The record gives the reactivity of an RNA of 207 nucleotides to 2A3. The RNA was probed in 150 mM KOAc, 10 mM MgCl2 and 150 mM bicine (pH 8.5) at 24 C. The 2A3 profile rests on 5,176 reads. For 2A3 the reverse transcriptase was SuperScript II with manganese. The data come from the RNA Mapping Database (RMDB), library RNAMAK.
[RMDB]
RNA sequence: GGGAACGACUCGAGUAGAGUCGAAAAGGGGUCGCUCCAUCGAUCUCAUGCCAAGCGACGAUCGUACUGAAGCCUCCACGGUACGGGAGCUUGCAUGAGGGAGGAGCGACGGAGGCACCCAAAGCGCGACAGAAAUGUUCGCAUUUCUGUCGCGCAACUACAGAACUUACUUCGGUAAGUUCUGUAGAAAAGAAACAACAACAACAAC
Reactivity to 2A3 in 0.01 (KOAc 150mM, MgCl2 10mM, bicine 150mM(pH8.5), 24C), signal-to-noise 3, nucleotides 027 to 156: g040g000g050g030u030c020g010c010u030c000c000a130u300c030g000a000u000c000u000c010a000u010g130c170c240a020a010g000c010g210a300c010g000a030u010c000g000u000a000c010u020g060a170a030g000c000c000u000c000c010a000c000g000g000u000a000c000g000g000g000a010g000c000u010u000g010c000a000u000g000a000g000g000g000a010g010g000a000g000c000g000a000c010g000g000a000g010g010c000a030c000c000c020a070a060a030g000c010g000c000g000a000c000a010g030a000a010a000u090g020u200u260c300g030c130a000u000u000u010c000u010g000u000c010g000c060g010c000a000a000